[RMDB]
RNA sequence: GGGAACGACUCGAGUAGAGUCGAAAAGAUAUGGAUAUACACGGGAGGCUAUUGUCGGAAACGACAAAUAGCCGAGGAUCGUGUUAUAUCCUAAGUCAAAAGCAGACAAGGCUUCGGCCUUGUCUGCCAAAUGUUAUAACUUCGGUUAUAACAUUUGAAAAGAAACAACAACAACAAC
Reactivity to DMS in 0.01 (KOAc 150mM, MgCl2 10mM, bicine 150mM(pH8.5), 24C), signal-to-noise 4, nucleotides 027 to 126: g000a000u000a050u010g000g000a010u000a010u000a020c010a010c000g000g000g000a040g020g030c000u000a000u000u000g010u000c000g010g000a020a010a030c000g010a020c000a000a010a040u000a010g030c000c000g000a040g010g010a070u010c010g010u010g010u000u020a010u010a010u000c000c000u000a000a100g000u000c000a130a120a150a180g000c010a000g000a000c000a000a010g010g010c010u000u010c290g030g010c010c010u000u000g000u000c000u000g000c000
Reactivity to 2A3 in 0.01 (KOAc 150mM, MgCl2 10mM, bicine 150mM(pH8.5), 24C), signal-to-noise 2, nucleotides 027 to 126: g010a010u020a000u050g000g010a000u020a010u010a020c000a010c000g000g010g020a060g000g000c000u000a010u010u010g010u010c000g000g020a010a000a010c000g000a000c010a000a080a030u030a000g000c010c010g010a010g000g000a020u000c000g000u020g020u150u040a030u010a000u000c000c000u000a000a000g010u000c020a040a080a070a140g010c010a000g020a010c020a010a000g010g000c000u140u300c300g120g010c020c000u000u010g000u010c010u000g020c010